[RMDB]
RNA sequence: GGGAACGACUCGAGUAGAGUCGAAAAGAUAUGGACCUGAAUAGGGAGAAGGCUAUCGGAAACGAUAGCAUUUCGAAGAACUAUCCAGGUCCUAAGUCAAAUCAGGGUAAGUUCGCUUACCCUGAAACAUACGAAUAAAGUUCGCUUUAUUCGUAUGAAAAGAAACAACAACAACAAC
Reactivity to 2A3 in 0.01 (KOAc 150mM, MgCl2 10mM, bicine 150mM(pH8.5), 24C), signal-to-noise 8, nucleotides 027 to 126: g000a000u010a010u050g000g000a000c000c000u000g010a020a000u010a010g070g060g030a300g010a080a000g010g000c010u000a000u010c000g000g010a020a010a000c010g000a000u010a000g010c010a020u000u020u010c010g090a270a120g080a100a020c000u000a000u010c020c010a000g030g000u000c000c000u000a000a000g000u000c010a020a020a240u060c000a000g020g000g000u010a010a010g010u050u210c300g030c200u000u010a000c000c000c000u000g000a000a000a000
Reactivity to DMS in 0.01 (KOAc 150mM, MgCl2 10mM, bicine 150mM(pH8.5), 24C), signal-to-noise 9, nucleotides 027 to 126: g010a020u000a040u010g000g000a010c000c000u000g010a020a010u000a010g020g010g010a130g010a010a010g000g000c000u000a000u000c000g010g010a010a010a030c000g010a020u000a000g000c000a010u000u000u000c000g010a200a170g010a160a140c000u000a010u000c020c000a010g000g010u000c000c000u000a000a050g000u000c010a130a130a180u000c010a010g010g000g010u000a000a010g010u000u020c280g020c010u000u000a010c000c000c000u000g000a010a040a160
Record summary
The record gives the reactivity of an RNA of 177 nucleotides to 2A3 and DMS. The reactions ran in a buffer of 150 mM KOAc, 10 mM MgCl2 and 150 mM bicine (pH 8.5), at 24 C. For 2A3, 57,308 sequencing reads were counted.